[RMDB]
RNA sequence: GGGAACGACUCGAGUAGAGUCGAAAAUCAAUUUGUUCAUAGUAACCAAAUUGAACAUAUUGCCUUAUUCUGUUAUGUGUAUGUAUGUCCUCUUGGCUGCCAAACUCUGGAGAGCUCAAAACAAGUGUGCAAGCAAAACUGAAAGAGGUUAAUAUCACCACUUAGAAGACUUCGGUCUUCUAAGUGGAAAAGAAACAACAACAACAAC
Reactivity to 2A3 in 0.01 (KOAc 150mM, MgCl2 10mM, bicine 150mM(pH8.5), 24C), signal-to-noise 4, nucleotides 027 to 156: u080c010a010a020u010u000u020g000u020u030c050a070u110a250g070u190a130a080c060c030a040a080a070u030u030g000a020a010c030a030u030a030u050u030g020c000c000u110u050a180u200u070c040u060g070u090u060a120u100g060u020g050u020a080u130g070u020a050u100g110u060c020c000u040c030u040u030g030g000c010u020g040c020c020a080a130a090c100u120c110u140g030g020a080g050a020g110c020u070c160a030a080a040a060c030a020a040g020u020g030u050g090c010a030a060g010c000a010a010a110a080c020u080g030a060a030a020g020a020g000g040u040u130a050a010u060a040u110c020a000
Reactivity to DMS in 0.01 (KOAc 150mM, MgCl2 10mM, bicine 150mM(pH8.5), 24C), signal-to-noise 1, nucleotides 027 to 156: u010c040a040a100u000u000u000g030u000u000c050a210u000a120g010u000a120a090c090c070a030a010a110u000u000g030a060a060c030a020u000a020u000u010g000c020c050u000u000a140u000u000c020u000g010u000u000a050u000g050u000g010u010a040u010g050u000a020u010g000u000c010c050u000c050u000u000g000g020c000u000g000c100c070a050a040a020c070u000c000u000g020g020a190g020a120g010c000u000c060a050a070a030a110c130a010a070g000u000g030u000g000c120a010a210g010c010a090a080a050a090c050u020g010a040a030a210g000a090g000g000u000u050a050a040u000a090u000c030a120